[RMDB]
RNA sequence: GGGAACGACUCGAGUAGAGUCGAAAAACUGCCAUUUCCGCCAGUCGCAGCUCAUGCGUGAUACCAGGGUGGAGCGGAGCUGCUGUGUUUGCCCCGGGAAUGGCGGCAAACUAAGGGGGACUUGGCCUGACUGGGUAUACUUCGGUAUACCCAGUCAAAAAGAAACAACAACAACAAC
Reactivity to 2A3 in 0.01 (KOAc 150mM, MgCl2 10mM, bicine 150mM(pH8.5), 24C), signal-to-noise 5, nucleotides 027 to 126: a020c050u040g000c000c010a000u000u000u000c030c110g210c030c030a080g080u090c050g010c020a000g000c000u000c020a140u260g050c010g070u160g160a090u150a200c030c050a150g210g110g110u180g050g060a010g010c000g000g020a010g000c010u000g000c000u030g000u000g000u070u010u020g000c010c000c000c000g030g050g060a300a230u170g030g000c030g000g010c000a010a010a000c010u080a110a240g010g020g020g000g000a000c000u010u020g000g000c000c010
Reactivity to DMS in 0.01 (KOAc 150mM, MgCl2 10mM, bicine 150mM(pH8.5), 24C), signal-to-noise 1, nucleotides 027 to 126: a130c050u010g020c000c000a020u000u000u000c000c010g020c000c000a150g010u020c150g010c000a030g010c010u030c000a060u030g050c020g050u020g000a170u060a100c020c140a180g010g000g000u000g000g020a300g000c010g060g000a000g010c000u000g000c040u000g000u010g030u000u000u000g000c000c000c050c000g000g030g050a100a030u040g000g020c230g000g060c000a020a000a010c010u000a080a060g000g030g000g030g000a000c040u000u000g000g020c000c280